[RMDB]
RNA sequence: GGGAACGACUCGAGUAGAGUCGAAAACGUCCUGGAGAGUCCUGUGCUGUGAGAAGCAGCUGGCUGGGAGGACCUGCCCCUUUAUGAGGCAGCAAUUACGAUUUGAGGUUAACAACGUGGAGCUGAUCCCGUGCUCUGUGCAGAGCCCCCAGCAGCACAUACCUAUCGUCUUCGGACGAUAGGUAUGAAAAGAAACAACAACAACAAC
Reactivity to 2A3 in 0.01 (KOAc 150mM, MgCl2 10mM, bicine 150mM(pH8.5), 24C), signal-to-noise 3, nucleotides 027 to 156: c020g050u020c030c000u010g000g050a060g010a010g040u020c040c020u070g030u120g040c020u010g000u050g040a050g030a130a050g050c060a010g010c010u040g090g020c000u000g000g030g030a220g030g030a100c000c000u020g000c000c010c020c000u080u210u090a170u220g060a130g040g000c000a010g000c010a060a110u110u090a050c060g060a130u030u140u090g070a070g010g100u160u170a080a060c080a030a020c030g020u100g010g010a020g020c030u020g040a100u050c000c000c000g000u010g010c010u010c040u060g110u070g010c030a020g030a040g090c040c000c000c010c000a030g000c000a010g020c000a000
Reactivity to DMS in 0.01 (KOAc 150mM, MgCl2 10mM, bicine 150mM(pH8.5), 24C), signal-to-noise 2, nucleotides 027 to 156: c090g020u000c030c020u000g010g010a150g010a120g010u000c020c030u010g050u000g060c000u020g040u000g000a130g000a090a210g020c070a090g010c010u000g000g010c020u010g020g020g030a100g040g010a120c110c010u020g020c000c010c010c010u000u000u000a090u020g010a030g000g010c020a030g000c110a060a100u000u000a090c020g010a200u000u020u000g000a170g020g010u000u000a100a130c040a080a060c040g030u000g010g010a160g030c020u020g000a090u000c020c030c000g040u000g000c040u020c010u010g030u010g040c060a080g000a120g000c000c000c010c000c000a150g000c000a040g000c020a270